The data come from the RNA Mapping Database (RMDB), library ARCHII. Chemical mapping of a 207-nucleotide RNA with DMS and 2A3. The 2A3 profile rests on 1,151 reads. DMS adducts were read by reverse transcription with MarathonRT. 2A3 adducts were read by reverse transcription with SuperScript II with manganese.
[RMDB]
RNA sequence: GGGAACGACUCGAGUAGAGUCGAAAAGUAAGACGGGGAAUAACAGGGGAUCAAACCCAAACGAGCUAGAACGGAUUCUCCCGCCUGAGAGAUGAACUUCGAAUUAUAAUUCAGGAUAGCCAUAAGAUAGCGUGUCGGUUCGCAGUUUUACGGUGAACAUCCACGUCAAGUUCGCUUGACGUGGAUGAAAAGAAACAACAACAACAAC
Reactivity to DMS in 0.01 (KOAc 150mM, MgCl2 10mM, bicine 150mM(pH8.5), 24C), signal-to-noise 1, nucleotides 027 to 156: g010u000a120a010g020a070c060g020g000g020g010a120a090u030a100a080c030a210g000g000g000g010a040u030c060a040a140a120c020c000c060a030a060a100c090g000a060g020c030u000a130g000a050a130c000g000g010a220u000u000c000u010c030c000c020g000c120c110u080g010a050g000a050g030a030u000g000a200a180c070u000u000c040g030a100a060u000u000a200u000a020a110u000u020c010a030g000g030a060u000a140g000c030c020a010u000a120a040g020a060u000a110g020c020g000u000g010u000c030g000g030u000u010c020g010c000a230g010u000u000u000u000a000c070g080g010u090g020a010a100
Reactivity to 2A3 in 0.01 (KOAc 150mM, MgCl2 10mM, bicine 150mM(pH8.5), 24C), signal-to-noise 2, nucleotides 027 to 156: g040u070a090a000g040a000c020g050g000g000g000a030a070u040a070a030c020a070g000g000g030g000a020u070c090a030a120a100c040c010c020a030a090a010c030g000a020g050c100u080a060g020a120a010c000g040g050a020u050u000c030u030c030c010c000g020c010c000u060g000a040g000a000g000a010u100g020a070a000c040u080u020c040g020a070a010u030u140a110u040a240a090u070u070c020a010g000g030a030u070a010g000c030c020a050u040a050a050g060a120u100a040g020c030g000u070g060u090c030g000g050u040u100c010g000c010a000g000u030u030u060u090a020c050g000g000u040g000a020a010